RNA sequence: GGGAACGACUCGAGUAGAGUCGAAAAGAGGACUGCUUGCCUCCAAGAGUUUGAGACCAGCCUGGGCAACAUAGUGAGACCUCUUCUCUACAACAAAUAAAAACAGCUGGGCGUGGUGGCACACCAGUAGUCCCAGCUACUCAGGAGGCUCAGGCGACAUCCGUAUAUACUUCGGUAUAUACGGAUGAAAAGAAACAACAACAACAAC
Reactivity to DMS in 0.01 (KOAc 150mM, MgCl2 10mM, bicine 150mM(pH8.5), 24C), signal-to-noise 3, nucleotides 027 to 156: g000a030g000g010a150c030u010g020c060u000u010g010c000c000u050c010c040a130a120g010a130g030u010u000u000g010a230g020a050c030c040a110g030c010c000u010g030g010g000c010a060a080c050a060u010a080g030u000g000a120g020a160c010c010u000c030u000u000c020u000c030u010a100c060a080a150c040a030a090a120u000a090a100a100a100a110c050a120g000c000u000g000g000g050c050g020u020g020g040u010g020g000c130a130c020a050c010c000a070g000u000a100g020u010c010c010c010a080g010c020u000a000c020u000c060a120g030g010a170g010g010c000u000c030a050g010g050c020g010a180
Reactivity to 2A3 in 0.01 (KOAc 150mM, MgCl2 10mM, bicine 150mM(pH8.5), 24C), signal-to-noise 5, nucleotides 027 to 156: g020a010g020g010a030c040u070g020c010u090u100g020c000c010u000c000c020a170a060g020a030g070u070u160u220g090a060g020a030c050c050a010g010c010c000u010g000g000g010c020a110a030c030a140u170a040g070u060g140a030g020a080c000c020u030c000u050u030c020u010c010u110a070c040a160a030c040a040a170a070u300a120a080a030a030a010c050a030g000c000u000g000g000g010c020g030u010g010g010u030g110g130c130a050c000a000c220c030a030g110u180a030g080u160c010c000c000a000g000c010u020a010c010u020c020a010g000g040a010g000g000c000u010c000a000g010g000c000g010a010